[RMDB]
RNA sequence: GGGAACGACUCGAGUAGAGUCGAAAAGGAGUUAAGUUCGCUUAACUCCCACUACCGAGAAUGCGACUCGGUAUAUCGCAAUAACCCAUGGAAACAAGGGAACCACUGACGACUUCGGUCGUCAGAAUCUUUGGUUUUGGUUCGCCAAAACCAAAGAAAAAGAAACAACAACAACAAC
Reactivity to DMS in 0.01 (KOAc 150mM, MgCl2 10mM, bicine 150mM(pH8.5), 24C), signal-to-noise 2, nucleotides 027 to 126: g020g020a030g000u000u050a000a000g000u010u020c210g040c010u000u000a010a010c000u000c000c000c060a040c160u000a050c030c010g010a010g000a200a120u010g000c200g060a050c010u010c000g000g000u000a010u000a030u000c080g000c110a100a100u020a130a090c020c010c020a120u010g010g000a140a080a130c120a050a030g000g010g010a120a060c100c180a110c010u020g000a040c000g010a030c020u000u010c300g030g030u000c000g010u000c010a000g000a050a040
Reactivity to 2A3 in 0.01 (KOAc 150mM, MgCl2 10mM, bicine 150mM(pH8.5), 24C), signal-to-noise 1, nucleotides 027 to 126: g010g020a000g010u000u010a000a000g000u010u050c140g000c110u000u000a000a010c000u020c000c000c000a040c020u020a040c000c010g000a010g020a060a180u260g110c140g090a040c000u020c000g020g000u020a030u020a010u000c030g000c060a070a060u040a170a160c010c000c010a040u020g050g100a070a080a020c020a120a090g000g020g040a050a040c040c000a020c000u000g010a010c010g010a010c000u060u010c280g160g010u000c000g010u000c000a010g000a000a000

Overview: This 177-nucleotide RNA was probed chemically with DMS and 2A3. Source: RMDB library M2PK50, as collected in RNAgym. For DMS the reverse transcriptase was MarathonRT. The RNA was probed in 150 mM KOAc, 10 mM MgCl2 and 150 mM bicine (pH 8.5) at 24 C. For 2A3 the reverse transcriptase was SuperScript II with manganese.